Chemical mapping of a 177-nucleotide RNA with 2A3 and DMS. For DMS the reverse transcriptase was MarathonRT.
[RMDB]
RNA sequence: GGGAACGACUCGAGUAGAGUCGAAAAUGUAUCACCGUUAGCAUCGGAGUGAAAGAGAACGGUUUAAGAUCAGGAUACGAUGCAAGAUAAAACGCAAUCAGGCCCAACGUGACCCGCAGCGCCUUGAACCCUACCAUUUAUUCGUAAAUGGUAGGGUAAAAGAAACAACAACAACAAC
Reactivity to 2A3 in 0.01 (KOAc 150mM, MgCl2 10mM, bicine 150mM(pH8.5), 24C), signal-to-noise 6, nucleotides 027 to 126: u130g020u020a040u040c020a010c040c010g030u020u060a030g050c040a050u040c050g080g050a130g080u170g090a100a120a030g090a020g020a040a010c040g030g050u040u050u120a090a060g020a080u080c050a020g080g030a020u020a130c050g010a010u030g010c010a000a030g060a060u150a110a130a020a010c050g000c040a020a080u040c010a030g050g010c000c010c010a030a010c030g030u030g050a050c000c010c000g000c040a030g040c010g030c020c000u020u030g030a030
Reactivity to DMS in 0.01 (KOAc 150mM, MgCl2 10mM, bicine 150mM(pH8.5), 24C), signal-to-noise 8, nucleotides 027 to 126: u010g020u000a050u000c040a080c030c010g010u000u000a110g020c040a070u000c020g010g000a140g020u000g010a050a080a130g000a110g010a050a060c040g010g000u010u000u010a080a090g020a090u000c090a090g000g000a110u000a060c060g010a060u010g030c040a110a080g000a110u010a050a050a080a080c100g010c070a060a080u010c060a070g000g000c010c020c020a080a100c090g010u000g010a100c030c020c030g020c080a080g010c080g020c090c020u000u000g010a130
About this RNA
It was measured as part of the RMDB library OK2TST. The RNA was probed in 150 mM KOAc, 10 mM MgCl2 and 150 mM bicine (pH 8.5) at 24 C. The DMS profile rests on 10,296 reads.